[RMDB]
An RNA of 177 nucleotides, treated with 2A3 and DMS and read out base by base.
The data come from the RNA Mapping Database (RMDB), library OK1LIB.
The 2A3 profile rests on 3,074 reads.
The RNA was probed in 150 mM KOAc, 10 mM MgCl2 and 150 mM bicine (pH 8.5) at 24 C.
2A3 is a SHAPE reagent: it acylates the 2'-hydroxyl of flexible nucleotides of all four kinds.
For DMS, 5,041 sequencing reads were counted.

RNA sequence: GGGAACGACUCGAGUAGAGUCGAAAAUGCUAUUGUAGAUAAUGCGCUAGAGUUCUUAUCGUUAGCCAUGGAGCCAGAAAAGGCAGCGAUGCUACUCAUACCUGAACCUUGGUUAUACAAUGAAGCGCACAGUUUGAAACUUCGGUUUCAAACUGUGAAAAGAAACAACAACAACAAC
Reactivity to 2A3 in 0.01 (KOAc 150mM, MgCl2 10mM, bicine 150mM(pH8.5), 24C), signal-to-noise 5, nucleotides 027 to 126: u100g000c000u020a030u080u050g030u020a040g010a060u080a110a090u130g030c050g030c100u070a030g020a020g100u040u050c020u050u140a010u050c030g060u020u050a030g010c010c010a030u080g090g020a070g080c070c000a050g120a130a160a040a060g030g000c000a000g000c020g020a020u070g010c040u040a040c020u040c080a030u070a190c020c020u040g040a020a040c010c010u050u050g030g020u090u100a070u030a060c060a020a080u100g100a170a000g000c010g000
Reactivity to DMS in 0.01 (KOAc 150mM, MgCl2 10mM, bicine 150mM(pH8.5), 24C), signal-to-noise 3, nucleotides 027 to 126: u040g020c030u000a080u020u010g000u000a050g000a120u010a060a050u010g010c020g020c040u000a100g000a150g010u010u000c100u000u000a010u020c040g020u010u000a050g010c040c010a040u020g000g000a080g000c070c010a050g000a060a090a110a100g000g000c030a020g000c140g000a030u000g000c040u000a070c060u000c080a090u020a130c130c030u010g000a140a080c060c010u000u000g000g010u020u010a070u000a010c040a070a080u000g000a070a030g000c040g000